Structure probing data (2A3 and DMS) for a 177-nucleotide construct. The DMS profile rests on 2,690 reads. It was measured as part of the RMDB library RFM100.
RNA sequence: GGGAACGACUCGAGUAGAGUCGAAAAUAUAAAUAAGCGGAGGAGAAGAAACUUACAAGGAUUCCCCUAGUAACGGCGAGCGAACCGGGACCAGCCCAGCUUGAGAAUCGGGUGGCUUCGUCACCUGUCUGGCUACAUAGUUCGCUAUGUAGCCAGAAAAAGAAACAACAACAACAAC
Reactivity to 2A3 in 0.01 (KOAc 150mM, MgCl2 10mM, bicine 150mM(pH8.5), 24C), signal-to-noise 3, nucleotides 027 to 126: u020a000u020a000a270a070u190a060a050g040c040g050g010a060g040g060a030g010a080a040g040a100a150a020c020u110u090a090c100a090a010g020g040a160u050u040c040c010c020c030u040a030g080u030a090a040c030g030g000c020g050a010g000c010g030a070a030c010c000g020g000g000a040c030c000a020g010c010c000c040a000g020c050u110u100g040a010g010a090a060u160c030g000g010g000u000g010g000c010u090u150c170g040u050c000a000c020c000u040g030
Reactivity to DMS in 0.01 (KOAc 150mM, MgCl2 10mM, bicine 150mM(pH8.5), 24C), signal-to-noise 2, nucleotides 027 to 126: u040a080u020a020a090a120u020a080a140g000c030g010g000a060g010g000a040g000a060a140g000a110a060a070c120u020u040a120c150a060a110g000g010a140u020u000c010c000c000c070u000a080g010u010a030a050c070g000g020c070g000a120g000c040g010a090a050c090c080g000g000g040a090c020c080a060g000c000c000c020a110g030c100u000u000g020a060g000a050a100u030c080g000g000g020u020g030g010c000u060u030c210g010u000c020a030c000c010u020g000
For 2A3 the reverse transcriptase was SuperScript II with manganese.
Reactivities are given for positions 27 through 126.
For 2A3, 1,460 sequencing reads were counted.